[RMDB]
RNA sequence: GGGAACGACUCGAGUAGAGUCGAAAACGUGCCGAGGCCGGUGGGUCGAUCGGCUGGCGCACCAGCAUGCCAGCGGUAGGGCCGCAGGCAUCCGCCCUCGCGAGGUCGGUGGCGCGCAUCAAAGCCACUUAGGUUCUCGAUUCGUCGAGAACCUAAGAAAAGAAACAACAACAACAAC
Reactivity to 2A3 in 0.01 (KOAc 150mM, MgCl2 10mM, bicine 150mM(pH8.5), 24C), signal-to-noise 2, nucleotides 027 to 126: c020g040u020g000c010c020g070a070g070g000c030c030g000g130u100g050g010g190u060c040g020a070u020c000g070g030c060u010g030g000c030g010c030a090c020c010a030g070c010a030u090g000c000c010a010g000c040g000g000u130a120g070g020g070c000c030g000c020a050g000g050c020a010u010c000c010g000c010c000c010u000c010g060c090g100a030g010g000u030c040g000g050u060g000g030c030g000c000g030c000a030u140c040a070a050a030g030c010c020a020
Reactivity to DMS in 0.01 (KOAc 150mM, MgCl2 10mM, bicine 150mM(pH8.5), 24C), signal-to-noise 2, nucleotides 027 to 126: c060g020u010g010c010c010g010a100g030g020c020c010g000g060u000g010g010g040u010c030g000a080u010c020g030g010c030u000g000g020c060g030c030a090c180c170a090g000c120a080u000g000c000c000a040g010c020g010g000u000a100g020g020g000c010c010g010c010a070g020g000c010a110u020c010c060g000c050c010c000u000c040g010c140g010a080g020g000u000c060g000g030u020g010g010c000g000c010g050c040a100u000c150a070a080a160g000c030c030a160